[RMDB]
RNA sequence: GGGAACGACUCGAGUAGAGUCGAAAAGAUAUGGACCGCCAUACCGCUGAUGACCUCGGAAACGAGCAAGGCGAUGGACGGUCCUAAGUCAAACCUUAUGAUGACUCUUCGGAGUCAUCAUAAGGAAGCAUUGACGAGUCUUCGGACUCGUCAAUGCAAAAGAAACAACAACAACAAC
Reactivity to DMS in 0.01 (KOAc 150mM, MgCl2 10mM, bicine 150mM(pH8.5), 24C), signal-to-noise 1, nucleotides 027 to 126: g000a040u010a300u000g000g010a040c000c000g000c000c000a010u010a040c060c010g020c000u000g000a060u000g000a100c300c000u000c010g000g000a110a080a300c020g010a000g000c020a060a150g050g000c010g020a000u000g010g000a000c000g020g000u000c000c000u020a000a050g000u010c000a040a090a130c000c000u000u000a000u000g000a000u000g000a000c000u010c000u000u020c170g100g020a020g000u000c000a000u000c000a020u000a000a000g000g000a030a000
Reactivity to 2A3 in 0.01 (KOAc 150mM, MgCl2 10mM, bicine 150mM(pH8.5), 24C), signal-to-noise 1, nucleotides 027 to 126: g030a010u100a060u180g020g000a000c000c000g040c060c020a020u060a250c030c110g000c020u070g030a300u200g020a120c040c000u000c010g030g030a000a070a070c010g020a000g070c050a060a170g030g040c000g030a020u020g010g000a080c010g000g020u040c000c000u000a010a010g020u000c020a040a020a180c000c000u010u000a010u000g020a000u010g010a000c000u010c020u100u170c300g140g000a000g000u000c000a010u000c010a060u000a000a010g000g020a000a000